[RMDB]
Structure probing data (2A3) for a 177-nucleotide construct. For 2A3 the reverse transcriptase was SuperScript II with manganese. The 2A3 profile rests on 2,519 reads. Values cover nucleotides 27 to 126. The RNA was probed in 150 mM KOAc, 10 mM MgCl2 and 150 mM bicine (pH 8.5) at 24 C.
RNA sequence: GGGAACGACUCGAGUAGAGUCGAAAAGCUGCCGCGGCUGAAACCAGAGACCUUUUACGACCUCGUCGUCCAGGUGGCGAUCGUUCGGCCGGGGCCAAUCCAGGGCGACAUGGUUCAUCCCUAUCUUCCCAUCGAUAUACUUCGGUAUAUCGAUGGGAAAAGAAACAACAACAACAAC
Reactivity to 2A3 in 0.01 (KOAc 150mM, MgCl2 10mM, bicine 150mM(pH8.5), 24C), signal-to-noise 1, nucleotides 027 to 126: g060c090u060g010c010c020g090c030g050g000c010u040g040a110a030a030c050c000a010g010a010g030a090c020c020u060u080u090u160a100c120g000a000c010c020u130c190g010u010c000g010u000c000c010a020g020g000u020g000g010c000g080a260u030c020g030u120u080c040g100g040c020c000g030g000g000g000c010c000a020a010u020c000c010a010g010g000g040c020g020a030c020a050u080g040g000u050u080c010a050u040c020c000c000u060a110u060c010u020u010